[RMDB]
RNA sequence: GGGAACGACUCGAGUAGAGUCGAAAACACCCGGCCGAGAGCAGAGCCGGUGCCCAACCGGAAGAAUCGCUGCCGGACGCCGACGCCGGACCCGCCGGCCUGUGGCGCUGGAUCUGGCUGGGGGUGCUCGGAACCGUCACGGUGGUCAGCCUCGUGCACGGAUAAGGGAUUUCGAUCCCUUAUCCGUAAAAGAAACAACAACAACAAC
Reactivity to 2A3 in 0.01 (KOAc 150mM, MgCl2 10mM, bicine 150mM(pH8.5), 24C), signal-to-noise 1, nucleotides 027 to 156: c000a030c000c000c000g000g000c000c000g080a040g000a060g030c030a050g040a030g110c040c010g000g000u030g080c040c050c010a060a060c010c000g030g000a050a030g040a210a110u080c080g000c010u020g000c010c000g010g020a030c010g080c030c060g010a010c070g050c030c000g060g100a050c010c010c040g140c040c010g020g010c000c030u140g060u100g160g000c050g000c090u070g070g030a170u050c050u070g040g000c050u070g040g000g000g030g040u040g000c090u040c010g040g000a150a190c050c020g030u040c040a060c290g000g000u030g010g030u070c040a010g000c000c000u020c010g050u180g070c070

Source information: The record gives the reactivity of an RNA of 207 nucleotides to 2A3. For 2A3 the reverse transcriptase was SuperScript II with manganese. Conditions: 150 mM KOAc, 10 mM MgCl2 and 150 mM bicine (pH 8.5), 24 C. Reactivities are rounded to 0.1 and cut off at 0 and 3. The data come from the RNA Mapping Database (RMDB), library OK3TST.